[RMDB]
RNA sequence: GGGAACGACUCGAGUAGAGUCGAAAAUGUCACCAGGGUAGUGUAUCGGGUCGAUUCCACAAUCGUCAGCCGAUAUUGUGCGUUUGCCACCUGAUAGCUUACAGUUUCGCCGGGUGCGUCAUUGCGACGGCCGGUAAUUAUUCGUAAUUACCGGCCGAAAAGAAACAACAACAACAAC
Reactivity to 2A3 in 0.01 (KOAc 150mM, MgCl2 10mM, bicine 150mM(pH8.5), 24C), signal-to-noise 2, nucleotides 027 to 126: u120g030u080c020a030c060c010a030g100g030g000u070a050g020u010g040u130a000u020c010g010g000g020u000c030g020a030u070u000c040c010a020c010a020a000u040c040g050u040c030a080g170c070c050g040a020u020a050u050u080g010u030g050c080g060u010u050u080g100c030c020a000c010c010u000g010a050u080a010g030c030u030u100a040c010a090g040u030u010u070c070g030c020c010g040g030g000u040g000c030g000u020c030a090u040u270g100c060g020a030
Reactivity to DMS in 0.01 (KOAc 150mM, MgCl2 10mM, bicine 150mM(pH8.5), 24C), signal-to-noise 2, nucleotides 027 to 126: u000g000u010c030a050c000c010a050g000g000g020u000a030g010u010g000u000a020u000c000g020g000g010u000c150g020a080u000u010c060c030a040c100a050a010u000c080g020u000c120a180g020c150c070g000a030u000a030u000u000g000u010g020c130g000u000u000u020g020c020c110a060c040c000u010g000a050u000a060g030c010u000u020a060c070a110g010u000u010u000c160g020c020c030g000g020g020u000g000c140g020u020c030a070u000u000g000c080g020a120